Structure probing data (DMS) for a 177-nucleotide construct.

[RMDB]
RNA sequence: GGGAACGACUCGAGUAGAGUCGAAAAGAUAUGGAACCGAUCCUACAGUUCGAUGCUCGAUAAGUAGCGUUCGGAAACGAACGGCUACUUUUGACGAGCUAAGAACUGUAGGAUCGGUUCCUAAGUCCAAUCAUGGCUAGUUCGCUAGCCAUGAUUGAAAAGAAACAACAACAACAAC
Reactivity to DMS in 0.01 (KOAc 150mM, MgCl2 10mM, bicine 150mM(pH8.5), 24C), signal-to-noise 1, nucleotides 027 to 126: g000a120u000a300u010g000g020a020a020c000c000g000a000u010c000c000u010a000c000a010g000u010u000c000g000a260u000g000c010u000c000g010a210u000a020a000g010u000a010g010c000g000u000u000c000g000g000a100a110a240c040g000a000a000c000g040g000c010u000a000c000u000u020u000u010g010a200c220g000a030g020c000u000a200a260g010a020a010c000u000g020u020a000g020g000a000u000c000g000g020u010u000c020c000u010a040a100g000u000c040
Conditions: 150 mM KOAc, 10 mM MgCl2 and 150 mM bicine (pH 8.5), 24 C. For DMS the reverse transcriptase was MarathonRT. For DMS, 1,498 sequencing reads were counted.